The record gives the reactivity of an RNA of 177 nucleotides to DMS and 2A3.
The 2A3 profile rests on 5,475 reads.
Conditions: 150 mM KOAc, 10 mM MgCl2 and 150 mM bicine (pH 8.5), 24 C.

[RMDB]
RNA sequence: GGGAACGACUCGAGUAGAGUCGAAAACAGUCAAUGUGAAGGCGGGCCAGACCAUCGCCGCAUUCUACCAGAGCACCGUCAUGAUCUUUGGCACGAUGGCUCGCUACAUCCCUAGAGUUAGGGAAAACACUAAUCCUCGAUUCGUCGAGGAUUAGUGAAAAGAAACAACAACAACAAC
Reactivity to DMS in 0.01 (KOAc 150mM, MgCl2 10mM, bicine 150mM(pH8.5), 24C), signal-to-noise 5, nucleotides 027 to 126: c080a090g020u010c100a100a090u000g000u000g010a110a120g000g020c010g020g000g020c020c010a060g020a160c070c080a100u000c090g020c060c060g020c100a050u010u000c050u000a110c060c050a070g000a050g010c090a040c030c040g010u000c120a080u000g010a070u000c030u000u010u000g020g020c050a050c110g000a070u000g000g010c010u000c020g020c020u000a050c100a130u000c010c000c000u000a020g000a140g010u010u010a030g000g000g000a030a050a090a170
Reactivity to 2A3 in 0.01 (KOAc 150mM, MgCl2 10mM, bicine 150mM(pH8.5), 24C), signal-to-noise 5, nucleotides 027 to 126: c030a000g130u140c100a070a140u110g020u070g210a190a060g030g000c000g010g020g000c000c010a040g030a090c020c030a070u060c070g020c030c010g020c010a030u120u030c020u060a090c010c050a020g010a010g060c030a030c070c020g140u120c020a080u120g070a130u060c050u080u100u090g030g000c050a020c100g060a060u030g000g000c000u000c010g000c010u000a010c000a090u080c020c000c000u110a150g080a040g300u210u020a000g040g000g000a020a100a010a010
For DMS, 4,802 sequencing reads were counted.